[RMDB]
RNA sequence: GGGAACGACUCGAGUAGAGUCGAAAAGUUGUAAGUGGUGAAACGGGUAGCGGUAAGACCACUCAAAUACCGCAAUAUCUGUAUGAGUUUAUGUGUGAAGAUGGGAAGGGGAGCUCUGCCAACAUUGGACCCUCCUAUAUUUCGAUAUAGGAGGGUCAAAAGAAACAACAACAACAAC
Reactivity to 2A3 in 0.01 (KOAc 150mM, MgCl2 10mM, bicine 150mM(pH8.5), 24C), signal-to-noise 1, nucleotides 027 to 126: g130u110u080g050u120a080a100g010u050g150g010u070g060a120a000a060c000g010g000g000u030a010g050c020g000g060u020a060a000g050a040c010c040a050c030u030c020a070a090a020u020a020c000c010g040c000a040a080u050a050u060c020u020g080u090a070u120g090a020g050u030u060u080a080u060g110u010g050u060g040a050a000g020a070u140g020g020g020a050a040g000g060g030g000a000g000c000u000c050u070g100c020c010a070a030c010a120u080u100g050
Reactivity to DMS in 0.01 (KOAc 150mM, MgCl2 10mM, bicine 150mM(pH8.5), 24C), signal-to-noise 3, nucleotides 027 to 126: g000u000u000g030u010a050a070g030u000g010g010u000g020a050a090a070c060g010g030g020u010a090g000c020g000g010u010a050a110g010a100c110c070a080c100u060c040a050a100a120u010a040c030c000g020c030a090a100u020a030u010c040u000g000u000a050u030g030a100g010u000u000u010a050u010g010u000g030u010g030a000a070g020a090u000g000g000g010a150a050g010g000g010g020a070g010c040u010c060u000g000c080c070a040a060c160a100u000u000g010
The record gives the reactivity of an RNA of 177 nucleotides to 2A3 and DMS. The DMS profile rests on 2,086 reads. It was measured as part of the RMDB library OK2TST. For DMS the reverse transcriptase was MarathonRT.